The record gives the reactivity of an RNA of 177 nucleotides to DMS and 2A3. It was measured as part of the RMDB library OK1LIB. DMS adducts were read by reverse transcription with MarathonRT. The RNA was probed in 150 mM KOAc, 10 mM MgCl2 and 150 mM bicine (pH 8.5) at 24 C.
[RMDB]
RNA sequence: GGGAACGACUCGAGUAGAGUCGAAAACAUAAAAUGCAACAACAAUAACAGUAAUAAAGGGGAGUAAUAUGCCUGUAAGGGCAAAGCCUAGCAUACCAAUCCACAUAUUUUGACCCGCUGUAUGGCCCUGCGCGUUAAUAUUCGUAUUAACGCGCAGAAAAGAAACAACAACAACAAC
Reactivity to DMS in 0.01 (KOAc 150mM, MgCl2 10mM, bicine 150mM(pH8.5), 24C), signal-to-noise 2, nucleotides 027 to 126: c090a200u030a030a000a090a000u000g000c150a130a030c090a030a050c130a060a120u010a080a150c040a110g010u000a080a040u000a010a140a080g000g000g000g000a070g000u040a020a200u010a040u010g000c030c110u030g040u070a030a050g000g000g000c010a050a090a130g000c000c000u010a090g020c020a030u000a040c000c030a010a160u020c030c020a020c030a070u040a070u000u000u000u000g060a090c000c030c000g000c100u000g030u030a020u000g000g010c050c090
Reactivity to 2A3 in 0.01 (KOAc 150mM, MgCl2 10mM, bicine 150mM(pH8.5), 24C), signal-to-noise 3, nucleotides 027 to 126: c000a000u300a040a040a070a130u220g080c120a120a090c000a020a020c040a130a090u150a110a070c110a060g090u110a030a070u070a110a120a020g040g010g050g000a020g030u020a030a060u030a030u090g020c000c020u130g140u170a100a140g040g000g000c060a100a000a010g000c000c000u060a030g030c000a010u030a040c040c010a010a010u010c000c030a080c030a020u100a110u120u020u020u140g160a120c020c000c010g050c020u020g060u070a100u130g050g000c020c010